[RMDB]
RNA sequence: GGGAACGACUCGAGUAGAGUCGAAAAGAAGAAGGCGGGCCUCAGGAUGCUCGCAGGAUCGAAGAGGUGGGUGAGGCCGUGGAAGAGACCCGGGCAGAUGCCUACGAGCUCCCGGACCACCGGGAGAUCUAAUAAAUCUCUUCGGAGAUUUAUUAGAAAAAGAAACAACAACAACAAC
Reactivity to DMS in 0.01 (KOAc 150mM, MgCl2 10mM, bicine 150mM(pH8.5), 24C), signal-to-noise 2, nucleotides 027 to 126: g000a130a140g010a150a130g010g020c070g010g010g020c020c030u020c130a060g000g020a120u010g000c030u000c030g000c030a040g020g000a130u000c050g000a070a100g010a100g000g030u010g000g010g020u000g010a130g010g000c050c070g000u000g020g020a080a080g010a130g010a130c040c030c040g000g020g010c020a100g000a100u000g020c010c030u000a080c110g010a170g000c010u000c000c000c000g010g020a190c190c300a080c000c000g000g000g000a040g010a010